Notes
An RNA of 177 nucleotides, treated with 2A3 and read out base by base. The 2A3 profile rests on 416 reads. It was measured as part of the RMDB library OK1LIB. Reactivities are rounded to 0.1 and cut off at 0 and 3.
[RMDB]
RNA sequence: GGGAACGACUCGAGUAGAGUCGAAAAGCUAUAAGCAUUGUUAUCACAAAAAGCCAUGUGCUGGUUGUUUGAACGGCGAUACAGGAAAGCCAGAACACUGCCGUAAGUGCAAAAUAAAGGAUUGUGUGCUAUCGGUACUGUUCGCAGUACCGAUAGCAAAAGAAACAACAACAACAAC
Reactivity to 2A3 in 0.01 (KOAc 150mM, MgCl2 10mM, bicine 150mM(pH8.5), 24C), signal-to-noise 1, nucleotides 027 to 126: g000c000u000a010u170a300a020g010c030a000u010u000g010u100u110a110u090c110a000c040a040a120a060a000a000g000c000c000a110u090g110u110g050c000u000g010g000u020u060g080u070u190u000g000a000a080c050g050g000c040g090a000u160a160c010a000g070g080a020a100a000g000c000c000a000g000a000a000c000a000c000u010g000c000c000g300u130a080a000g060u040g070c000a010a010a010a010u290a060a290a000g210g050a130u100u000g060u030g000u000